[RMDB]
RNA sequence: GGGAACGACUCGAGUAGAGUCGAAAAAGGUCGGCAGGGAUGCGAGGGGCUGAACGGUUUCGACUUCGCGCAUCGAAUCAAGGGAAGCGUGCCGGUGCAGGCAAGAGACCACCGUAAGCGUCGUUGCUAGAUCCCUGACCUUCGGGUCGGGGAUCUAAAAAGAAACAACAACAACAAC
Reactivity to DMS in 0.01 (KOAc 150mM, MgCl2 10mM, bicine 150mM(pH8.5), 24C), signal-to-noise 1, nucleotides 027 to 126: a040g000g000u010c060g000g000c060a060g000g000g010a020u010g030c020g040a040g000g010g000g010c010u000g000a110a060c170g000g010u010u000u000c030g010a060c030u010u000c060g000c040g000c090a130u000c050g030a100a090u000c090a090a120g000g000g000a110a110g010c070g070u010g040c210c000g000g000u000g010c000a020g000g030c000a040a000g000a100g020a050c000c000a040c000c000g020u020a010a010g000c020g010u000c010g000u020u010g000c020
Reactivity to 2A3 in 0.01 (KOAc 150mM, MgCl2 10mM, bicine 150mM(pH8.5), 24C), signal-to-noise 1, nucleotides 027 to 126: a010g030g000u050c020g000g030c010a030g000g050g020a010u050g000c010g020a030g010g040g060g020c040u060g070a060a010c050g110g000u010u000u080c020g010a020c000u090u030c030g000c030g000c040a060u060c020g040a090a060u070c040a050a060g070g040g000a050a040g020c010g020u010g030c010c010g000g000u000g000c040a000g050g000c000a020a000g030a000g000a040c010c010a000c000c010g120u190a030a000g000c020g000u000c010g000u020u010g000c000